The data come from the RNA Mapping Database (RMDB), libraries RFM100 and RFMREP. Structure probing data (2A3 and DMS) for a 177-nucleotide construct. DMS adducts were read by reverse transcription with MarathonRT. 2A3 adducts were read by reverse transcription with SuperScript II with manganese.
[RMDB]
RNA sequence: GGGAACGACUCGAGUAGAGUCGAAAAAAUGCAGAGAUUGUGUGUAUCGGCUUAGUGCGAUGUAAUGCGCUUUGUACGAAAGAUUUCUCUGCGACAUUAAUUUGGGGCAGAUGGGCAGUUGUGAUUCAUGUACCUCUGAUUUCGAUCAGAGGUACAUAAAAGAAACAACAACAACAAC
Reactivity to 2A3 in 0.01 (KOAc 150mM, MgCl2 10mM, bicine 150mM(pH8.5), 24C), signal-to-noise 5, nucleotides 027 to 126: a000a000u190g000c010a010g000a010g010a010u050u090g070u030g050u030g040u210a080u040c000g000g010c000u000u010a010g000u000g010c020g070a110u140g170u300a130a140u290g000c000g000c000u000u020u010g050u070a220c000g000a020a060a000g080a020u000u020u050c010u000c000u000g000c010g000a000c010a000u160u240a110a120u060u020u180g010g000g000g040c020a030g060a090u030g020g020g020c010a030g040u030u040g010u010g040a090u030u030c030
Reactivity to DMS in 0.01 (KOAc 150mM, MgCl2 10mM, bicine 150mM(pH8.5), 24C), signal-to-noise 3, nucleotides 027 to 126: a050a070u020g020c000a020g000a010g000a010u020u020g000u020g020u020g010u000a120u000c000g020g010c000u010u000a030g020u010g010c000g020a150u060g010u040a120a110u030g010c000g020c000u000u000u010g020u010a070c030g000a040a070a150g000a170u010u000u000c000u000c000u010g000c020g010a110c210a050u030u030a040a080u000u010u000g000g000g010g000c050a030g000a040u000g000g000g020c080a070g000u000u010g020u020g000a140u010u000c150